[RMDB]
Structure probing data (2A3) for a 207-nucleotide construct. Conditions: 150 mM KOAc, 10 mM MgCl2 and 150 mM bicine (pH 8.5), 24 C. The data come from the RNA Mapping Database (RMDB), library M2RFPK. Values are in units of 0.01, from 0 to 300, in steps of 10. The 2A3 profile rests on 599 reads.

RNA sequence: GGGAACGACUCGAGUAGAGUCGAAAACGGUCCUGCCAUGAGACCGUAACGAGGACAUGUCGCCUCGAAUGGCGUCGGGGAGCCGCCAGCUUACCCCAAGGAUGAGCGCCUAAUGCCGGUACCCGGGUAUACGCUACCCCGUUCGCGGGGUAGCGAAUCGAGUAUAGUCUUUCGAGACUAUACUCGAAAAAGAAACAACAACAACAAC
Reactivity to 2A3 in 0.01 (KOAc 150mM, MgCl2 10mM, bicine 150mM(pH8.5), 24C), signal-to-noise 1, nucleotides 027 to 156: c000g000g010u000c010c020u000g030c080c050a070u080g010a040g010a070c020c030g000u030a000a000c000g010a010g030g020a010c040a210u250g070u170c170g000c020c020u000c010g000a020a000u020g000g000c030g060u020c020g010g000g000g070a050g050c010c000g070c050c000a050g010c010u030u070a080c000c010c070c030a080a100g050g000a170u070g040a010g040c050g040c000c090u110a110a020u050g040c060c020g000g000u030a040c010c010c010g000g050g000u160a120u070a170c000g000c010u000a000c010c010c000c000g020u030u060c090g000c010g000g000g010g020u000a000g000c000g000a030a020